[RMDB]
RNA sequence: GGGAACGACUCGAGUAGAGUCGAAAAGGUCAUCGUGGCGCUGGUUACCCAAUGGGCGCGCCAAGACCGCCGAGUCGCGUCCCGCGAAGACCGGCAUGCCGACAGCGACUACGCCGACGACGAGCUGUCGGGGUGGCGGUUUCGACCGCCACCCCGAAAAAGAAACAACAACAACAAC
Reactivity to 2A3 in 0.01 (KOAc 150mM, MgCl2 10mM, bicine 150mM(pH8.5), 24C), signal-to-noise 3, nucleotides 027 to 126: g050g000u030c040a040u160c210g260u100g000g000c040g000c040u080g080g000u160u280a140c020c000c020a000a120u300g000g020g000c000g000c020g000c020c000a010a000g020a000c020c010g000c000c000g000a010g020u010c020g000c110g100u050c010c000c000g000c020g000a050a020g040a040c000c000g020g050c050a000u090g040c030c000g070a050c060a030g010c020g060a030c030u120a040c060g010c040c030g030a040c020g020a030c010g000a030g050c000u000g040
Reactivity to DMS in 0.01 (KOAc 150mM, MgCl2 10mM, bicine 150mM(pH8.5), 24C), signal-to-noise 1, nucleotides 027 to 126: g000g050u000c000a080u040c130g010u010g000g030c020g070c000u080g100g010u050u000a230c030c000c030a160a060u030g000g030g070c050g050c000g000c010c000a020a050g000a010c020c000g010c080c000g030a110g060u000c000g010c100g000u020c000c010c020g020c060g000a000a130g000a080c000c000g000g050c010a000u000g000c010c030g000a060c000a020g000c000g000a160c100u020a100c060g000c060c030g000a160c040g000a130c110g000a250g000c020u000g010